[RMDB]
RNA sequence: GGGAACGACUCGAGUAGAGUCGAAAAUAGAUGCAUCAGACUGUUCCUUAGAGAAAGGUUUGCCAUGGAGUCGUAUAUUGUAACUGAGCUGAAGUUCACUCAUCGAUAAGUUGUGCCCAAGGAAUCGAAUUCCUUCCAGUCCUUCUAAGCAGUCCAGCGGGGAGAGUAGAUUCGUCUACUCUCCCCGAAAAGAAACAACAACAACAAC
Reactivity to DMS in 0.01 (KOAc 150mM, MgCl2 10mM, bicine 150mM(pH8.5), 24C), signal-to-noise 1, nucleotides 027 to 156: u010a200g010a130u020g030c000a060u010c070a110g010a030c030u010g030u020u000c010c020u000u000a130g000a140g030a080a060a120g020g000u010u010u010g020c020c000a140u000g070g020a170g000u000c110g020u000a120u000a070u030u000g010u000a000a210c030u000g000a110g050c010u000g030a030a220g000u000u000c060a060c070u000c050a040u030c050g000a130u010a050a090g000u020u000g020u000g010c040c010c020a140a150g010g000a050a010u010c130g000a000a300u000u000c000c010u000u000c010c000a090g040u030c020c020u020u000c010u000a050a060g020c000a110g020u000c010c020a110g020